[RMDB]
RNA sequence: GGGAACGACUCGAGUAGAGUCGAAAAGCCUCAGCGAGGUCCCCUCGGUAGGUGCCUUCCGCGUCACGGAGCGCCGUGACCGGGGGUAACCCUGGCCGGGCACAGGCCCGUCUGGGUUAGCCCGCCUCAUAGUAAAAAGUUUCGACUUUUUACUAUGAAAAGAAACAACAACAACAAC
Reactivity to 2A3 in 0.01 (KOAc 150mM, MgCl2 10mM, bicine 150mM(pH8.5), 24C), signal-to-noise 6, nucleotides 027 to 126: g020c000c000u070c040a040g040c030g040a110g020g020u080c020c010c000c000u020c010g010g010u030a030g000g020u010g010c010c030u230u180c040c010g030c110g100u070c020a030c060g040g020a130g150c190g070c030c010g010u020g050a010c000c000g000g000g000g000g000u010a020a010c010c000c000u020g090g000c040c020g000g000g000c060a080c060a140g180g000c000c000c000g040u050c040u070g000g000g000u010u040a020g020c000c000c000g020c010c020u010
Reactivity to DMS in 0.01 (KOAc 150mM, MgCl2 10mM, bicine 150mM(pH8.5), 24C), signal-to-noise 5, nucleotides 027 to 126: g000c060c000u010c060a050g000c060g010a050g010g010u020c050c050c120c010u000c020g010g020u000a070g010g010u010g000c070c040u010u030c000c010g020c270g010u020c120a090c020g000g000a280g020c230g000c010c000g010u020g000a010c000c000g000g000g000g000g010u000a010a030c100c010c070u010g010g020c020c010g010g000g000c020a140c280a170g020g000c000c000c000g000u020c020u010g010g000g000u000u000a090g000c000c000c010g020c110c080u010
About this RNA: Chemical mapping of a 177-nucleotide RNA with 2A3 and DMS. For 2A3 the reverse transcriptase was SuperScript II with manganese. Reactivities are given for positions 27 through 126. Source: RMDB libraries RFM100 and RFMREP, as collected in RNAgym. The RNA was probed in 150 mM KOAc, 10 mM MgCl2 and 150 mM bicine (pH 8.5) at 24 C.